Chemical mapping of a 177-nucleotide RNA with 2A3 and DMS. The 2A3 profile rests on 17,353 reads.
RNA sequence: GGGAACGACUCGAGUAGAGUCGAAAAGAAAGGAAGAAUACAAGCAAUCAAUAUAUAUACCCAGAUUGCAACCCAUGGGAAAUAAAAGGGAAAGGGGAAGUAUUCGGGACAUAAAACCCCAUGUCCCGUAUUGUAGUAUGUUCGCAUACUACAAUACAAAAGAAACAACAACAACAAC
Reactivity to 2A3 in 0.01 (KOAc 150mM, MgCl2 10mM, bicine 150mM(pH8.5), 24C), signal-to-noise 9, nucleotides 027 to 126: g090a030a060a010g070g040a050a070g020a080a040u110a090c060a090a030g010c000a000a010u010c000a110a000u080a010u030a010u030a020u100a300c020c020c020a010g000a010u000u010g000c010a030a130c010c000c010a050u130g010g010g080a040a120a050u200a060a150a090a060g040g020g020a120a070a040g030g000g010g010a060a040g050u030a050u040u140c020g000g000g000a000c000a000u140a040a190a120a130c020c010c000c010a000u010g000u000c000c000c000
Reactivity to DMS in 0.01 (KOAc 150mM, MgCl2 10mM, bicine 150mM(pH8.5), 24C), signal-to-noise 9, nucleotides 027 to 126: g010a110a100a140g010g010a090a070g000a100a070u010a060c120a110a120g010c010a010a000u000c010a130a120u030a110u040a110u050a150u040a100c110c090c110a110g000a010u000u000g000c010a140a100c050c040c030a080u020g010g000g000a070a070a110u040a030a070a080a070g010g000g000a040a050a060g000g000g000g010a040a120g010u010a060u020u020c030g010g000g000a010c000a010u000a030a030a040a120c090c040c020c060a050u000g000u000c000c000c010
Conditions: 150 mM KOAc, 10 mM MgCl2 and 150 mM bicine (pH 8.5), 24 C.
Reactivities are given for positions 27 through 126.